Structure probing data (DMS and 2A3) for a 177-nucleotide construct.
The 2A3 profile rests on 9,008 reads.
It was measured as part of the RMDB library OK2TRN.
For DMS, 15,814 sequencing reads were counted.
Reactivities are given for positions 27 through 126.

RNA sequence: GGGAACGACUCGAGUAGAGUCGAAAACCCACCAUUUGGGGAUUCUUACAUUGUCAUAGGAGUUGGGGACAAGAAAAUCACCCACCACUGGCAUAGGAGUGGUAGCACCAUCGGAAAGGCAUUUGAGUACCAUUGAUCUAUUCGUAGAUCAAUGGUAAAAAGAAACAACAACAACAAC
Reactivity to DMS in 0.01 (KOAc 150mM, MgCl2 10mM, bicine 150mM(pH8.5), 24C), signal-to-noise 9, nucleotides 027 to 126: c010c000c010a160c140c120a090u010u010u010g010g010g010g000a080u000u000c070u010u000a130c100a130u000u000g010u000c040a070u000a100g010g010a090g020u000u000g020g000g010g010a050c100a050a080g010a050a040a080a080u010c050a120c020c010c020a080c080c040a070c060u000g010g010c050a080u010a070g010g010a050g020u000g000g010u000a070g010c050a100c040c030a050u000c050g000g010a050a060a070g010g000c070a080u000u000u010g010a140g020
Reactivity to 2A3 in 0.01 (KOAc 150mM, MgCl2 10mM, bicine 150mM(pH8.5), 24C), signal-to-noise 6, nucleotides 027 to 126: c030c000c000a010c010c020a140u070u070u120g030g000g010g000a020u090u020c020u030u070a080c030a180u060u110g050u050c020a050u080a150g050g070a130g100u170u130g060g010g010g010a010c020a060a040g110a110a110a010a020u090c050a190c030c000c010a010c010c010a030c040u050g050g000c020a070u080a060g030g040a040g010u050g040g010u030a020g010c010a030c040c010a030u040c000g000g020a090a020a020g030g010c010a030u040u060u160g050a040g070